RNA sequence: GGGAACGACUCGAGUAGAGUCGAAAAGAUAUGGAAUCCACAAGGGAGCUGGUCGGAAACGACUCAGCGACGAUCUUGGAGAUUCCUAAGUCAAAGACCACGUAUCAGUUCGCUGAUACGUGGUCAACGUUGCUACAUUCUUCGGAAUGUAGCAACGAAAAGAAACAACAACAACAAC
Reactivity to DMS in 0.01 (KOAc 150mM, MgCl2 10mM, bicine 150mM(pH8.5), 24C), signal-to-noise 2, nucleotides 027 to 126: g010a020u030a300u010g000g000a010a000u000c000c280a130c000a000a000g020g010g000a020g030c000u010g020g010u000c000g000g000a090a070a190c020g000a000c000u000c000a000g010c000g000a060c250g000a010u000c000u030u000g000g010a160g010a010u000u000c000c000u010a020a040g040u010c000a080a070a120g000a020c000c000a000c000g000u000a010u010c000a010g010u010u030c280g010c000u000g010a010u000a000c000g040u000g010g010u000c000a020a010
Reactivity to 2A3 in 0.01 (KOAc 150mM, MgCl2 10mM, bicine 150mM(pH8.5), 24C), signal-to-noise 1, nucleotides 027 to 126: g000a000u090a070u110g000g000a000a020u000c010c020a060c000a070a000g010g000g000a000g000c000u000g000g010u000c020g030g030a110a000a070c040g020a010c030u170c300a000g000c000g010a010c030g010a010u040c000u000u010g020g020a050g020a060u010u000c010c000u030a180a030g100u000c010a170a110a000g000a000c000c000a030c000g000u000a010u000c000a000g030u050u130c240g070c280u000g000a000u000a000c010g010u000g020g010u000c000a000a000